Conditions: 150 mM KOAc, 10 mM MgCl2 and 150 mM bicine (pH 8.5), 24 C. This 207-nucleotide RNA was probed chemically with 2A3 and DMS. High DMS reactivity at an A or C suggests that its Watson-Crick edge is free. DMS adducts were read by reverse transcription with MarathonRT.
RNA sequence: GGGAACGACUCGAGUAGAGUCGAAAAACCUUUGUGCACUGAGGGUCUAGGGAGUCGGCUAGCUCCCAUUGGGAGCAAACCGACAUCGAUCUAGACCUACCCACCAGUGCACUCUGGUAAACCUUGAUCAUGGUUGUUCGCAACCAUGAUCAAGGAAUCAUAACAACAUGUUCGCAUGUUGUUAUGAAAAAGAAACAACAACAACAAC
Reactivity to 2A3 in 0.01 (KOAc 150mM, MgCl2 10mM, bicine 150mM(pH8.5), 24C), signal-to-noise 4, nucleotides 027 to 156: a000c010c000u000u010u010g000u000g000c000a010c010u000g010a040g020g020g000u000c000u010a010g000g040g010a030g000u000c000g000g020c010u030a010g000c010u010c000c030c030a170u140u260g010g000g000a000g020c000a060a020a040c020c000g010a010c010a040u070c020g060a070u020c000u010a000g000a000c000c000u010a000c000c020c010a070c010c000a000g000u000g000c000a000c000u010c000u000g010g000u030a100a080a070c000c000u000u000g000a000u000c000a000u010g010g010u010u000g010u060u080c260g000c120a000a000c000c000a000u000g000a000u000c000a000a000g000g000a000a020
Reactivity to DMS in 0.01 (KOAc 150mM, MgCl2 10mM, bicine 150mM(pH8.5), 24C), signal-to-noise 3, nucleotides 027 to 156: a040c000c000u000u000u000g010u000g020c000a020c000u020g000a110g030g000g010u010c000u000a050g000g010g010a070g030u000c000g000g010c010u000a300g010c010u000c000c000c010a090u000u020g040g000g010a040g010c010a030a060a040c000c000g000a020c010a040u000c080g000a080u000c000u000a010g010a020c000c000u000a000c020c010c010a300c090c010a010g020u000g010c020a000c000u000c010u010g020g000u000a030a080a100c010c000u000u000g020a010u000c010a010u000g010g020u000u000g010u000u030c300g000c000a030a020c000c000a010u000g010a000u000c010a000a000g010g000a050a050